[RMDB]
RNA sequence: GGGAACGACUCGAGUAGAGUCGAAAAGUUUUUAUCUAUCAACAGCAGAGUGUUACUACCGAGUACAGUCCACAGGAUCCAGGUUGACGCUGUCAGCCCCAGCACCAUGCCGAAGCACAGUUCACGCGUACGUGGCGGUAUUCGUACCGCCACGUACAAAAGAAACAACAACAACAAC
Reactivity to DMS in 0.01 (KOAc 150mM, MgCl2 10mM, bicine 150mM(pH8.5), 24C), signal-to-noise 1, nucleotides 027 to 126: g010u000u000u040u000u000a060u020c040u010a130u030c080a040a050c090a070g020c040a070g000a100g010u000g000u000u000a090c120u000a050c100c060g020a050g030u010a060c120a100g020u020c020c040a060c090a020g010g020a080u010c020c100a100g000g010u000u020g000a040c100g000c100u020g020u010c040a070g010c040c010c010c040a080g000c080a030c000c050a030u010g010c050c040g000a110a070g000c140a030c080a040g020u000u030c060a070c050g010c170